[RMDB]
RNA sequence: GGGAACGACUCGAGUAGAGUCGAAAAGAAAAAGAGCACGAGAUAUCGAGAGACUAAUGUCUCGAGUAGUGGAUACGAAGGCCUAAGUAUCGACUACGAAGGCCUAAGAUAUCGAGUGCUCGAAAAAGGGUUAUAUAUCCUUCGGGAUAUAUAACCCAAAAGAAACAACAACAACAAC
Reactivity to 2A3 in 0.01 (KOAc 150mM, MgCl2 10mM, bicine 150mM(pH8.5), 24C), signal-to-noise 5, nucleotides 027 to 126: g120a010a080a030a000a010g010a000g000c000a000c000g050a050g000a010u010a000u010c000g000a000g000a000g000a030c040u210a290a130u300g010u010c000u000c010g010a000g010u000a000g000u010g190g040a020u050a030c010g040a070a040g080g000c000c020u050a040a000g000u000a000u110c140g090a070c060u020a000c010g020a050a020g010g000c000c010u010a010a000g010a000u000a000u000c000g010a010g010u000g010c000u000c000g000a000a000a000a000a000
Reactivity to DMS in 0.01 (KOAc 150mM, MgCl2 10mM, bicine 150mM(pH8.5), 24C), signal-to-noise 3, nucleotides 027 to 126: g030a090a050a040a100a080g000a000g020c010a000c000g000a250g010a020u000a010u000c000g020a110g030a020g000a010c020u010a080a110u030g000u000c010u000c010g000a210g000u000a010g000u000g000g000a090u000a030c010g000a200a040g000g020c000c000u020a070a300g000u010a010u030c290g010a080c260u010a000c000g000a240a090g000g010c010c010u010a090a120g020a010u000a000u000c010g000a200g010u000g000c000u000c000g010a000a020a050a030a090
An RNA of 177 nucleotides, treated with 2A3 and DMS and read out base by base.
For 2A3 the reverse transcriptase was SuperScript II with manganese.
The DMS profile rests on 4,176 reads.
The reactions ran in a buffer of 150 mM KOAc, 10 mM MgCl2 and 150 mM bicine (pH 8.5), at 24 C.